[RMDB]
RNA sequence: GGGAACGACUCGAGUAGAGUCGAAAAGUGAGUCCUUACGAGGACUCACAAUAAAUUCAGGGGUAAUUCGACCGCAAAUAUUACCCCUGAUGCGGUCGAAAAAGCUGCUACGUACGCGUAGCAGCAAACCAUUAUGAUGCUUCGGCAUCAUAAUGGUAAAAGAAACAACAACAACAAC
Reactivity to 2A3 in 0.01 (KOAc 150mM, MgCl2 10mM, bicine 150mM(pH8.5), 24C), signal-to-noise 5, nucleotides 027 to 126: g000u000g010a000g000u000c000c020u040u040a110c290g130a030g000g000a000c000u010c000a000c000a010a000u010a000a040a010u120u090c050a030g020g010g050g060u140a070a170u030u020c010g030a030c010c010g040c040a010a050a020u260a140u150u210a190c010c000c000c000u000g000a000u000g000c000g000g020u040c020g020a010a030a010a010a000g000c000u000g000c010u000a010c000g040u000a030c260g020c000g130u000a000g000c000a000g000c000a000a000
Reactivity to DMS in 0.01 (KOAc 150mM, MgCl2 10mM, bicine 150mM(pH8.5), 24C), signal-to-noise 2, nucleotides 027 to 126: g000u000g000a010g010u000c000c000u040u050a090c240g030a030g000g000a040c000u020c000a000c000a030a020u050a070a090a120u010u020c070a060g020g000g000g030u010a100a130u010u030c110g000a060c040c040g000c040a030a030a080u060a210u010u010a170c050c000c010c000u000g000a020u000g000c020g010g000u010c000g040a020a070a100a070a070g000c000u000g000c010u000a000c000g010u010a090c180g010c010g060u010a010g000c000a000g000c000a000a060